RNA sequence: GGGAACGACUCGAGUAGAGUCGAAAAAGAAAGCUUUCUUGGUUGAACUGUUAAACAGAGGCUAUAUCGUCAAUGGCAUGCCUACUAUGAUUUAUUUCAUUCCUGUUAUAUAGAUGCAUAUUAAGGUACAGAAAGAUCAGUUAUCCUGCCAAAAGUCAAGUGCUACAUGAUUCGUCAUGUAGCACUUAAAAGAAACAACAACAACAAC
Reactivity to DMS in 0.01 (KOAc 150mM, MgCl2 10mM, bicine 150mM(pH8.5), 24C), signal-to-noise 2, nucleotides 027 to 156: a120g000a130a130a130g000c030u000u000u000c010u000u000g010g020u000u000g020a130a180c050u000g000u010u010a110a050a100c040a040g000a080g030g010c020u000a110u010a060u000c090g030u010c020a090a150u000g000g000c020a050u000g030c070c030u030a080c050u000a090u000g030a060u000u000u000a080u020u000u020c030a110u000u000c060c020u010g000u010u000a070u000a100u000a100g020a110u000g000c060a100u000a070u000u000a070a070g000g020u000a060c040a150g000a030a040a040g010a070u010c030a060g000u000u000a080u000c060c000u000g000c030c030a030a050a040a100g000u000c030
Reactivity to 2A3 in 0.01 (KOAc 150mM, MgCl2 10mM, bicine 150mM(pH8.5), 24C), signal-to-noise 3, nucleotides 027 to 156: a010g060a030a020a000g000c010u090u050u010c010u050u070g010g030u020u060g030a080a040c060u020g060u130u090a150a150a020c050a040g060a010g040g050c030u020a010u010a020u180c070g050u030c050a060a050u030g000g010c020a010u030g010c010c000u070a090c030u010a070u130g060a110u020u070u100a090u000u140u050c020a040u080u150c000c000u030g030u210u000a040u000a010u050a060g090a120u120g000c010a010u010a030u100u070a080a020g000g000u030a060c040a040g020a030a090a000g020a050u040c000a010g000u020u020a060u110c010c010u020g030c010c010a030a130a000a000g070u100c030